[RMDB]
RNA sequence: GGGAACGACUCGAGUAGAGUCGAAAAAUCGAGAGGUGGACCGUCGGAGGAAUGGGGCGUUCAGCCCCAGGAGAGCCGAUGGUGUCUGACGACUGGAGUCGCCAGGCGGAGCAAACGAGUAAUUCUAGAGCUAAUACGUGCGUAAAUCCCGACUCCUCAUCAUCUAGAGGUUCGCCUCUAGAUGAUGAAAAGAAACAACAACAACAAC
Reactivity to 2A3 in 0.01 (KOAc 150mM, MgCl2 10mM, bicine 150mM(pH8.5), 24C), signal-to-noise 1, nucleotides 027 to 156: a000u140c040g020a010g000a030g020g010u030g000g030a010c000c000g010u000c000g000g000a030g010g030a030a030u020g000g000g000g000c020g080u300u250c160a090g020c000c000c000c000a000g000g000a010g010a030g000c020c000g000a010u010g010g000u010g000u000c010u000g020a020c010g020a010c030u170g170g030a090g070u030c030g000c000c000a010g020g000c020g020g010a040g010c050a020a090a090c060g010a030g140u120a050a090u120u000c030u110a050g010a000g080c000u000a010a100u090a150c070g010u070g060c000g050u090a000a080a120u030c000c000c010g040a050c020u020c000c000u020